[RMDB]
RNA sequence: GGGAACGACUCGAGUAGAGUCGAAAAUUACCUCCCUUCGGGGAGGUAAACUGAACGCUGCAAGCGGCAGCGCGCUCGCAUGCGCACACACGCACAAUAAAAGCAGUAUGCACUUCGGUGCAUACAAAUCAAAGUCUUUCUUCGGAAAGACUUUGAUAAAAGAAACAACAACAACAAC
Reactivity to DMS in 0.01 (KOAc 150mM, MgCl2 10mM, bicine 150mM(pH8.5), 24C), signal-to-noise 2, nucleotides 027 to 126: u000u000a020c000c000u000c000c000c000u000u010c190g080g010g030g030a000g010g010u000a000a000a070c020u030g000a120a120c060g010c000u000g010c010a080a150g010c080g000g000c030a020g000c030g010c040g020c030u000c280g020c160a050u000g060c020g010c030a140c210a040c090a070c060g010c030a120c220a040a070u000a050a070a100a070g010c130a060g010u000a000u000g000c000a000c000u010u010c180g000g010u000g000c000a000u000a000c000a020a150
Reactivity to 2A3 in 0.01 (KOAc 150mM, MgCl2 10mM, bicine 150mM(pH8.5), 24C), signal-to-noise 2, nucleotides 027 to 126: u030u000a000c000c010u000c000c000c020u000u030c260g070g010g000g020a000g030g000u000a000a010a010c020u000g040a090a010c050g000c020u000g000c090a160a300g090c010g090g000c060a000g000c020g000c010g010c020u020c040g100c060a060u170g010c000g050c000a000c000a010c000a010c020g060c000a050c080a180a120u170a110a110a010a000g000c010a040g000u000a010u000g010c000a000c000u050u030c190g080g000u000g040c000a000u030a000c000a000a020
Source: RMDB library M2PK50, as collected in RNAgym. Structure probing data (DMS and 2A3) for a 177-nucleotide construct. For 2A3 the reverse transcriptase was SuperScript II with manganese. Conditions: 150 mM KOAc, 10 mM MgCl2 and 150 mM bicine (pH 8.5), 24 C. The 2A3 profile rests on 1,749 reads.